An RNA of 177 nucleotides, treated with DMS and 2A3 and read out base by base. Source: RMDB library TTRDES, as collected in RNAgym. For DMS, 8,521 sequencing reads were counted. The RNA was probed in 150 mM KOAc, 10 mM MgCl2 and 150 mM bicine (pH 8.5) at 24 C. For 2A3 the reverse transcriptase was SuperScript II with manganese. Values cover nucleotides 27 to 126.
RNA sequence: GGGAACGACUCGAGUAGAGUCGAAAAGAUAUGGACAUGAAUUUAGUAAUGGUUCGGAAACGAACCAAUUAGAAUCAUGUCCUAAGUCAAAAUCAACAGUUCCUUCCUUCGGGAAGGAACUGUUGAACUACCCUUUAAAGUUCGCUUUAAAGGGUAGAAAAGAAACAACAACAACAAC
Reactivity to DMS in 0.01 (KOAc 150mM, MgCl2 10mM, bicine 150mM(pH8.5), 24C), signal-to-noise 5, nucleotides 027 to 126: g000a050u000a300u010g000g000a010c000a000u000g000a040a070u010u010u000a030g010u000a090a100u000g010g010u000u000c000g020g000a120a090a290c000g010a020a010c000c000a010a010u000u000a020g010a030a090u000c000a010u000g010u000c000c000u010a030a090g000u010c050a080a080a190a190u000c000a020a000c000a010g000u000u000c010c000u000u000c010c000u000u020c250g010g010g010a030a010g000g000a000a000c000u000g010u000u000g000a010a220
Reactivity to 2A3 in 0.01 (KOAc 150mM, MgCl2 10mM, bicine 150mM(pH8.5), 24C), signal-to-noise 3, nucleotides 027 to 126: g020a010u080a040u150g000g000a000c010a000u030g090a140a150u110u060u050a100g040u100a250a290u060g010g000u000u000c020g030g010a080a060a050c020g010a000a000c000c010a000a000u020u010a000g000a010a020u010c010a010u000g000u000c000c010u000a050a000g030u000c030a020a020a020a300u040c000a000a000c000a010g000u000u010c010c000u010u020c000c010u080u090c300g060g020g020a000a000g000g000a000a000c010u000g000u000u000g010a000a000